[RMDB]
RNA sequence: GGGAACGACUCGAGUAGAGUCGAAAAGAAAGAAAGAAGCGAGCUGGCGCAGCCGCACGGGCAACCGUCAAUCCAGCACUUCACAAGUCUUGUCGUUCUGACAGGACAUCCAGCAACCCACCGGGAAAAAAGGACUACAGCUUCGGCUGUAGUCCAACAUUCGGAUCUAGUUCGCUAGAUCCGAAUGAAAAGAAACAACAACAACAAC
Reactivity to 2A3 in 0.01 (KOAc 150mM, MgCl2 10mM, bicine 150mM(pH8.5), 24C), signal-to-noise 2, nucleotides 027 to 156: g030a020a030a000g020a000a160a000g020a070a010g030c080g050a020g040c020u010g020g000c040g020c130a030g110c110c080g110c050a010c010g010g060g030c070a090a110c020c000g030u030c010a020a070u020c010c010a000g070c040a040c030u070u070c060a060c060a190a090g000u020c000u000u010g000u000c000g080u170u170c090u300g030a000c000a000g010g000a000c000a000u040c010c000a030g110c000a050a100c020c010c010a040c060c060g060g020g010a070a210a040a000a000a010g010g000a030c000u000a000c000a010g000c000u000u180c300g080g040c000u040g000u000a000g000u000c000c000a000a000